[RMDB]
RNA sequence: GGGAACGACUCGAGUAGAGUCGAAAAGGUCAGGCCUGAUCGGAAACAGCAGCAGGUGAGUCCGCCUUAUGUGAAGGAUCGGCUGAAACACGAGGAAAUACUGAGCCAACGCAAGCCGGUAGCCGAAAAAAUCUAGUUCACUUCGGUGAACUAGAAAGAAAUAGGCACACUUCGGUGUGCCUAUUUCAAAAGAAACAACAACAACAAC
Reactivity to 2A3 in 0.01 (KOAc 150mM, MgCl2 10mM, bicine 150mM(pH8.5), 24C), signal-to-noise 1, nucleotides 027 to 156: g010g010u020c000a010g080g060c000c000u110g000a090u020c020g120g060a120a040a000c040a020g100c020a000g040c020a020g050g000u050g050a050g070u070c130c070g040c030c000u080u060a090u050g070u050g100a090a080g060g020a030u080c020g000g000c010u060g040a050a060a000c050a010c070g000a100g010g110a090a070a020u060a120c020u020g010a040g040c000c050a000a110c100g000c070a030a020g000c000c000g040g000u010a010g150c020c010g000a110a000a000a020a000a000u010c020u000a020g000u000u010c000a000c000u080u100c270g170g000u000g000a000a000c000u000a000g000a000a000a000